[RMDB]
RNA sequence: GGGAACGACUCGAGUAGAGUCGAAAAACGACUACGUGUGGUUGAGCAAACUGCUAGAUUUGGCUCCCAACUACCGUCAGCUGGAGCUGUACCAGAUUUUAGAGAGGGAGUCGCGAGGCCAGUCUCGAGUUCCGACCGAAUUCGUUCGGUCGGAACUAAAAGAAACAACAACAACAAC
Reactivity to 2A3 in 0.01 (KOAc 150mM, MgCl2 10mM, bicine 150mM(pH8.5), 24C), signal-to-noise 2, nucleotides 027 to 126: a000c060g010a000c030u110a030c060g110u040g040u040g150g000u020u130g060a020g020c000a000a000a210c030u070g040c000u070a050g000a240u040u020u250g030g000c000u000c000c000c000a000a130c050u050a110c190c000g150u110c060a040g000c010u070g110g000a060g220c140u070g090u000a060c000c070a170g010a240u020u150u140u300a170g030a010g030a080g000g000g000a000g040u000c000g000c030g090a000g000g030c000c040a080g080u000c010u030c040g000
Reactivity to DMS in 0.01 (KOAc 150mM, MgCl2 10mM, bicine 150mM(pH8.5), 24C), signal-to-noise 1, nucleotides 027 to 126: a210c000g000a060c060u030a050c210g110u010g030u000g020g020u050u000g000a000g000c040a040a050a100c000u010g000c170u070a090g000a100u000u010u060g000g000c000u000c020c050c030a040a190c070u000a000c100c300g030u000c120a150g010c220u000g000g000a150g040c120u020g000u000a220c000c000a180g010a070u020u050u000u000a060g000a100g090a300g020g050g000a000g030u000c000g020c050g000a100g000g000c020c000a080g000u000c000u000c010g000